[RMDB]
RNA sequence: GGGAACGACUCGAGUAGAGUCGAAAAAUGUGGGUGGAACUUGCUUGAGGGCUGCAUUGCCAGUGUUCUCUUUAUGAUCUCAGGCAGUACUUCCUUUGGGGCAUUUAUUCCUUAUUGCUAGGAGUUAGAACAGGCUGCAGGAUUGUAACACUAGCUAAGGGUAGGAAAAUUUCGAUUUUCCUACCCUAAAAGAAACAACAACAACAAC
Reactivity to DMS in 0.01 (KOAc 150mM, MgCl2 10mM, bicine 150mM(pH8.5), 24C), signal-to-noise 2, nucleotides 027 to 156: a050u000g020u000g010g000g030u000g010g010a070a090c040u000u000g040c000u020u000g020a050g000g020g060c020u000g020c020a130u000u000g050c060c040a160g020u000g010u010u000c060u030c090u010u000u000a070u040g000a070u000c030u010c020a100g010g020c000a070g000u000a050c040u020u000c000c040u000u000u000g010g030g000g040c020a090u000u000u000a120u020u000c020c010u000u010a100u000u010g010c040u000a070g020g000a110g020u000u000a060g010a060a110c040a080g010g030c010u010g020c030a160g010g020a090u000u010g010u000a040a050c020a090c020u000a030g010c040u000a180
Reactivity to 2A3 in 0.01 (KOAc 150mM, MgCl2 10mM, bicine 150mM(pH8.5), 24C), signal-to-noise 3, nucleotides 027 to 156: a000u110g000u160g030g010g020u040g010g040a090a050c060u060u200g020c000u020u020g040a010g010g060g020c020u020g010c040a200u060u300g060c080c000a000g000u020g060u210u010c090u000c080u070u120u070a130u150g080a100u040c020u010c020a020g000g000c000a000g000u010a060c030u080u070c010c030u030u000u060g090g010g010g010c010a010u090u070u070a090u080u130c010c000u080u100a170u080u140g020c020u000a010g000g070a150g030u020u020a010g030a080a030c040a040g060g040c030u070g000c050a030g020g140a130u020u070g010u040a000a000c020a010c040u020a000g070c000u210a030